Structure probing data (DMS) for a 177-nucleotide construct.
RNA sequence: GGGAACGACUCGAGUAGAGUCGAAAAUGGUGCUCAUACCCGAGCCAGAGAAGCAAAGAUCUCCCCAAGAUAACCAGAUGGCAAUUAUCAUCAUGGUGGCAGUGGGCCUUCUAGGUUUGAUAACUGCAUAAGCUGAUAGCUUCGGCUAUCAGCUUAUAAAAGAAACAACAACAACAAC
Reactivity to DMS in 0.01 (KOAc 150mM, MgCl2 10mM, bicine 150mM(pH8.5), 24C), signal-to-noise 1, nucleotides 027 to 126: u000g060g040u000g000c010u000c040a090u000a150c100c120c160g000a070g010c020c070a180g000a020g010a090a080g020c070a080a040a190g010a070u000c090u000c010c000c010c020a090a090g000a120u000a030a010c120c010a030g020a020u030g010g060c170a120a060u020u000a060u040c040a030u000c020a110u010g000g020u010g000g000c040a090g020u000g040g000g000c050c020u010u000c050u000a120g040g020u000u010u000g040a140u020a040a050c030u000g000c130